[RMDB]
RNA sequence: GGGAACGACUCGAGUAGAGUCGAAAACAUGCACAGCUAGUGAACAUGAAAAUGGUUUAUGACCUUGUUAUAGGUCUAGUUGUAAGUCUUUGCUAACCAACACAAAGGCCCUUGGCCACUGAAGCCCCGGAGAAACUUAGUUCGCUAAGUUUCUCCGAAAAGAAACAACAACAACAAC
Reactivity to DMS in 0.01 (KOAc 150mM, MgCl2 10mM, bicine 150mM(pH8.5), 24C), signal-to-noise 2, nucleotides 027 to 126: c070a060u010g010c060a050c030a080g020c080u020a050g010u000g000a020a070c010a020u000g010a080a080a090a110u010g020g010u000u000u000a100u020g010a040c000c010u000u000g000u000u010a070u000a020g000g000u000c000u000a020g010u000u000g000u000a120a100g010u000c020u000u000u010g000c070u000a050a150c150c130a070a060c150a110c080a050a080a070g010g000c040c050c050u000u010g010g000c030c070a040c110u000g000a090a150g010c050c000c110
Reactivity to 2A3 in 0.01 (KOAc 150mM, MgCl2 10mM, bicine 150mM(pH8.5), 24C), signal-to-noise 1, nucleotides 027 to 126: c040a020u160g000c030a010c010a020g050c020u060a020g060u000g150a180a000c000a050u050g140a060a020a010a070u130g120g030u000u140u120a120u160g000a020c010c060u010u040g170u140u210a290u230a140g000g060u000c000u000a010g000u030u060g000u070a110a040g010u040c010u000u000u030g000c010u030a030a140c000c020a070a050c020a000c010a130a050a050g060g000c030c030c000u080u140g030g000c020c000a040c040u040g050a070a030g050c020c020c010